[RMDB]
RNA sequence: GGGAACGACUCGAGUAGAGUCGAAAAACAACUGUGGAAUGUCAAAGUCUGAUCGUUGAUACACUUCCGCACAAUGCUUGGGAUCUCAUAACGUGUGAUGCAGAAAUUGCAAGAUUAGGACAUAUCGGGCGAUAUUGUCAUUCGUGACAAUAUCGCCAAAAGAAACAACAACAACAAC
Reactivity to DMS in 0.01 (KOAc 150mM, MgCl2 10mM, bicine 150mM(pH8.5), 24C), signal-to-noise 1, nucleotides 027 to 126: a040c090a090a090c060u010g020u010g010g010a010a030u010g010u010c060a010a110a100g000u010c110u000g000a080u000c050g010u000u030g000a100u020a170c120a070c050u010u000c000c030g000c010a070c140a110a050u000g000c010u020u000g000g010g020a040u000c070u000c090a060u000a110a090c110g020u000g020u000g010a170u000g000c010a030g000a040a110a060u000u000g030c020a040a130g040a040u010u010a100g000g000a020c090a020u020a030u020c080g040
Reactivity to 2A3 in 0.01 (KOAc 150mM, MgCl2 10mM, bicine 150mM(pH8.5), 24C), signal-to-noise 1, nucleotides 027 to 126: a000c040a000a010c080u110g040u050g050g060a080a080u090g030u080c020a100a040a000g030u040c050u110g130a160u090c040g030u100u040g020a050u080a080c030a020c040u050u020c020c010g120c040a040c040a080a110u080g010c020u020u060g050g000g000a050u010c050u000c060a100u100a100a030c050g000u040g000u020g030a050u040g030c050a030g000a030a200a050u080u030g000c010a000a060g000a060u080u050a020g000g040a040c040a040u150a040u080c060g000